[RMDB]
RNA sequence: GGGAACGACUCGAGUAGAGUCGAAAAUCUACACGCUCGUAACUUUGUAGUCUAGGACGGGGUGAGGUCGCAAAGGAGUCAUGGUGUGCUAUCAGGAAAAAGUGUGGAUACAUCAAUGAAGUAUCCAGUCCUCACAGCUAUUCGUAGCUGUGAGGACAAAAGAAACAACAACAACAAC
Reactivity to 2A3 in 0.01 (KOAc 150mM, MgCl2 10mM, bicine 150mM(pH8.5), 24C), signal-to-noise 1, nucleotides 027 to 126: u030c000u020a010c030a000c020g040c020u040c090g040u110a060a040c070u000u070u130g070u130a110g010u000c030u060a040g070g020a030c020g000g070g000g000u010g020a030g000g030u060c020g040c070a040a030a030g000g050a000g040u030c010a010u030g000g000u070g020u010g000c010u040a040u190c050a010g060g070a000a050a000a050a170g110u100g020u090g070g000a000u010a010c020a060u100c050a060a270u170g040a080a010g000u000a010u000c000c000a000
Reactivity to DMS in 0.01 (KOAc 150mM, MgCl2 10mM, bicine 150mM(pH8.5), 24C), signal-to-noise 2, nucleotides 027 to 126: u010c070u000a090c070a140c090g030c300u010c130g020u020a100a100c090u000u000u020g010u000a080g020u010c020u000a040g000g010a090c110g020g000g010g050u000g000a070g000g030u020c120g040c080a030a070a060g000g000a080g000u000c020a100u000g000g010u000g020u010g000c070u000a060u000c080a080g000g000a000a140a040a100a080g010u000g050u000g010g030a010u000a000c000a060u010c090a100a130u000g000a030a130g000u000a010u000c000c000a120

Chemical mapping of a 177-nucleotide RNA with 2A3 and DMS.
Source: RMDB library OK2TRN, as collected in RNAgym.
Reactivities are given for positions 27 through 126.
Conditions: 150 mM KOAc, 10 mM MgCl2 and 150 mM bicine (pH 8.5), 24 C.
The 2A3 profile rests on 1,312 reads.